[RMDB]
RNA sequence: GGGAACGACUCGAGUAGAGUCGAAAAACAGGGAUUGGGGCACUGACUUCCUGCACGUCAAAAAUCUGCAUAUAACAUAUGAUACCCCCAAAACCUAGCCUACUGUUGACUAGAAUCCUUACUAAUAACAGUAGACUAACAUAUUUUGCAUGUUAUACAUUAUGCAUACCUUCGGGUAUGCAUAAUGAAAAGAAACAACAACAACAAC
Reactivity to 2A3 in 0.01 (KOAc 150mM, MgCl2 10mM, bicine 150mM(pH8.5), 24C), signal-to-noise 5, nucleotides 027 to 156: a010c020a010g020g000g000a050u010u050g000g010g020g000c070a020c080u020g020a030c010u080u040c050c030u070g010c040a040c100g040u070c070a030a080a060a070a130u050c040u060g020c050a010u070a020u040a160a060c030a030u170a080u240g080a070u170a130c000c000c000c000c000a010a020a000a030c000c010u010a010g000c000c000u000a010c000u010g000u000u040g100a150c090u040a030g050a080a060u090c050c010u070u130a090c020u060a030a120u120a050a010c000a000g000u000a000g000a010c010u050a070a010c030a050u140a180u100u210u150u230g080c060a050u050g070u120u140a070u110a040
Reactivity to DMS in 0.01 (KOAc 150mM, MgCl2 10mM, bicine 150mM(pH8.5), 24C), signal-to-noise 2, nucleotides 027 to 156: a120c060a050g020g030g010a120u010u000g010g010g020g060c060a110c040u000g010a090c040u010u010c050c050u010g010c010a040c100g020u000c060a030a070a100a090a140u000c070u000g010c010a160u020a030u000a050a050c020a290u000a100u010g010a180u000a160c040c000c000c010c020a020a020a070a070c060c040u000a030g010c000c010u000a030c030u000g020u000u020g020a030c010u020a020g010a140a130u020c200c140u010u030a250c000u000a010a020u000a030a010c010a020g020u000a000g000a000c010u010a010a080c050a090u000a090u020u000u000u000g000c030a050u000g020u000u000a090u000a170